[RMDB]
RNA sequence: GGGAACGACUCGAGUAGAGUCGAAAAACCGGCUCAUCUUCGGCAAAGGGCGGCGGUCCUCAGUGCUCUUACUCUUUUCUGUAAAGAGGAGACUGCUGGACUCUCCGCCCAAGCCGAGAUGGGCCUCCAACAUGGGAGUUCGCUCCCAUGAAAAGAAACAACAACAACAAC
Reactivity to 2A3 in 0.01 (KOAc 150mM, MgCl2 10mM, bicine 150mM(pH8.5), 24C), signal-to-noise 9, nucleotides 027 to 129: a000c010c000g000g000c000u000c000a020u010c030u300u150c030g000g000c010a090a130a280g020g000g000c010g000g000c020g000g000u000c000c000u010c010a040g010u150g260c020u000c010u060u230a300c010u010c000u050u080u070u080c150u210g300u300a020a010a000g010a000g000g010a000g000a000c000u010g050c040u010g000g000a010c030u030c040u000c140c000g000c010c000c000a000a000g000c000c000g000a000g000a000u000g000g000g000c010c000u020c000c000a020a020
Reactivity to DMS in 0.01 (KOAc 150mM, MgCl2 10mM, bicine 150mM(pH8.5), 24C), signal-to-noise 9, nucleotides 027 to 129: a020c080c000g000g020c000u000c030a030u020c020u160u060c030g000g000c000a080a260a220g020g000g010c000g000g000c300g040g000u000c010c000u000c000a030g000u020g160c050u000c020u040u120a300c020u000c020u030u040u040u100c190u120g100u140a010a020a020g000a020g050g000a020g000a040c000u000g030c150u030g010g010a030c000u010c020u010c010c000g050c030c000c020a000a050g020c000c000g000a020g000a030u020g010g000g040c070c020u000c000c030a060a140